[RMDB]
RNA sequence: GGGAACGACUCGAGUAGAGUCGAAAAGAAAGAGCCUGAAUACGGAGAACCGUAACGCAUGACCGAAUAUUCAGCCCAGUUCACGACGUAAGUCGUGCGCCCGAGUCUGGGUCUGGGCGCUGGGGUCACGUACAUGCGUCAGGCAGGACUUAGAGAACCAUCCGAUUAGUUUCGACUAAUCGGAUGGAAAAGAAACAACAACAACAAC
Reactivity to DMS in 0.01 (KOAc 150mM, MgCl2 10mM, bicine 150mM(pH8.5), 24C), signal-to-noise 1, nucleotides 027 to 156: g010a140a100a140g000a090g010c010c010u000g000a120a140u000a040c050g010g010a150g030a110a190c010c010g040u000a110a150c040g010c000a050u010g000a090c040c050g000a130a130u010a150u000u000c040a300g010c020c000c000a040g010u010u020c010a010c000g040a000c000g000u000a150a150g030u000c010g020u000g000c220g050c010c010c000g010a090g000u000c060u020g000g000g000u010c000u000g050g020g080c010g000c070u000g000g020g000g000u000c050a020c060g030u010a110c010a020u000g020c030g020u010c080a090g000g000c000a110g010g020a040c050u000u000a040g000a190g000a110a290
Reactivity to 2A3 in 0.01 (KOAc 150mM, MgCl2 10mM, bicine 150mM(pH8.5), 24C), signal-to-noise 3, nucleotides 027 to 156: g100a020a070a000g160a030g000c000c000u040g070a120a070u110a080c000g010g010a100g080a300a240c010c000g000u000a030a000c000g000c000a000u030g020a050c000c080g060a110a010u100a160u110u120c070a030g040c000c000c000a010g020u150u160c040a010c000g010a000c060g060u160a150a090g010u000c010g010u000g000c010g020c020c000c010g090a060g200u040c080u290g020g010g010u010c020u030g000g000g040c050g000c060u010g010g010g010g040u040c040a010c090g030u040a060c000a010u010g000c000g020u010c010a010g010g020c020a020g000g040a030c050u090u090a060g000a010g040a140a030